[RMDB]
RNA sequence: GGGAACGACUCGAGUAGAGUCGAAAACAGCGUACCUUCGGGUACGCUGAAAACUAAAACAAAUGCAAAGCCCGAUACGGCUAAACGAGCGAAAAGAAUAAGAAAGUAGGUGGUUCGCCACCUACAAGAGAUUACUUAUGUUCGCAUAAGUAAUCUCAAAAGAAACAACAACAACAAC
Reactivity to 2A3 in 0.01 (KOAc 150mM, MgCl2 10mM, bicine 150mM(pH8.5), 24C), signal-to-noise 4, nucleotides 027 to 126: c000a000g010c000g000u000a010c000c000u020u070c170g060g000g000u000a000c000g000c000u000g000a010a000a000a000c000u060a030a010a000a080c040a050a090a030u140g030c040a090a130a050g030c010c000c000g090a110u130a250c060g020g000c010u080a140a150a060c070g080a040g050c030g030a070a060a040a030g080a060a140u180a170a050g110a140a070a020g010u000a000g000g000u000g010g020u020u020c110g040c070c000a000c000c000u000a000c000a000a000
Reactivity to DMS in 0.01 (KOAc 150mM, MgCl2 10mM, bicine 150mM(pH8.5), 24C), signal-to-noise 4, nucleotides 027 to 126: c000a010g000c010g040u000a010c000c000u000u030c180g020g020g050u000a000c000g020c000u000g000a020a050a070a170c070u010a070a050a080a140c100a040a060a060u000g010c040a090a130a110g000c000c010c100g000a080u010a130c230g010g000c010u010a010a140a050c100g000a090g000c060g010a070a050a060a080g020a090a130u000a080a040g000a140a110a130g000u000a000g010g010u000g010g010u000u000c210g000c000c000a020c010c000u000a000c010a020a060
This 177-nucleotide RNA was probed chemically with 2A3 and DMS. The reactions ran in a buffer of 150 mM KOAc, 10 mM MgCl2 and 150 mM bicine (pH 8.5), at 24 C. 2A3 adducts were read by reverse transcription with SuperScript II with manganese. The DMS profile rests on 3,684 reads. The 2A3 profile rests on 6,204 reads.